An RNA of 177 nucleotides, treated with DMS and 2A3 and read out base by base. Conditions: 150 mM KOAc, 10 mM MgCl2 and 150 mM bicine (pH 8.5), 24 C.
RNA sequence: GGGAACGACUCGAGUAGAGUCGAAAAGAUAUGGAAGGCUUUGAUCUACGAAGCCGUUGAUCUCGGAAACGAGGGAGGCUGAGUAGGGAGCCUUCCUAAGUCAAACGGUAGCCUUCGGGCUACCGAAGCUUUUGGUAAGGUUCGCCUUACCAAAAGCAAAAGAAACAACAACAACAAC
Reactivity to DMS in 0.01 (KOAc 150mM, MgCl2 10mM, bicine 150mM(pH8.5), 24C), signal-to-noise 1, nucleotides 027 to 126: g010a050u010a300u000g000g070a050a020g010g020c010u020u000u020g000a040u010c010u000a010c000g000a290a050g030c000c020g010u030u030g020a050u000c000u000c020g000g000a060a120a250c000g010a010g000g000g000a000g020g040c000u000g000a280g000u000a000g010g000g000a040g010c010c000u000u000c000c000u000a010a080g010u000c020a160a130a300c030g000g000u020a000g010c000c000u000u010c200g030g000g000c010u000a000c000c000g000a010a040
Reactivity to 2A3 in 0.01 (KOAc 150mM, MgCl2 10mM, bicine 150mM(pH8.5), 24C), signal-to-noise 1, nucleotides 027 to 126: g010a030u090a050u180g000g040a000a010g000g040c030u300u300u110g080a090u090c000u040a000c000g010a000a020g000c000c010g030u060u030g000a010u000c000u000c020g030g060a080a060a080c030g000a040g040g010g030a010g010g000c000u030g020a040g000u000a010g010g000g000a000g030c000c020u000u000c000c000u000a020a000g000u010c040a040a020a040c020g010g010u000a000g000c030c000u130u240c300g080g030g010c000u000a010c000c000g010a000a020

The DMS profile rests on 1,065 reads.